[RMDB]
Source: RMDB library OK3TST, as collected in RNAgym.
Chemical mapping of a 207-nucleotide RNA with 2A3.
For 2A3 the reverse transcriptase was SuperScript II with manganese.
The RNA was probed in 150 mM KOAc, 10 mM MgCl2 and 150 mM bicine (pH 8.5) at 24 C.

RNA sequence: GGGAACGACUCGAGUAGAGUCGAAAACUUCAUCUGUAAAAAUCUUCUUCAUGUCUCAUGGAUUUCAACAUGCAGUUUAUCUUGGUUUGUUCCAUAAAACAUCAGAUGCAACUUUAAUGGCCUAACCCCAAAAAGAUAACUUGGCAGCCAUCAAGCAGAUAAUCACCGGAUUCGUCCGGUGAUUAUCAAAAGAAACAACAACAACAAC
Reactivity to 2A3 in 0.01 (KOAc 150mM, MgCl2 10mM, bicine 150mM(pH8.5), 24C), signal-to-noise 2, nucleotides 027 to 156: c030u120u120c040a040u030c040u070g010u050a010a050a130a140a210u060c010u120u010c020u090u010c060a090u070g050u020c030u030c070a050u110g080g020a110u150u170u070c040a100a070c010a010u050g030c040a040g010u050u060u070a080u020c000u040u060g040g000u060u040u070g040u030u030c030c000a010u090a020a060a020a030c030a030u080c020a000g040a060u040g070c040a020a030c030u140u150u100a150a060u080g030g000c020c030u010a010a000c010c000c000c000a000a130a050a000a000g130a090u150a110a040c030u020u040g040g020c040a020g000c010c000a030u060c050a060a020g100c120a000
Notes:
Values cover nucleotides 27 to 156.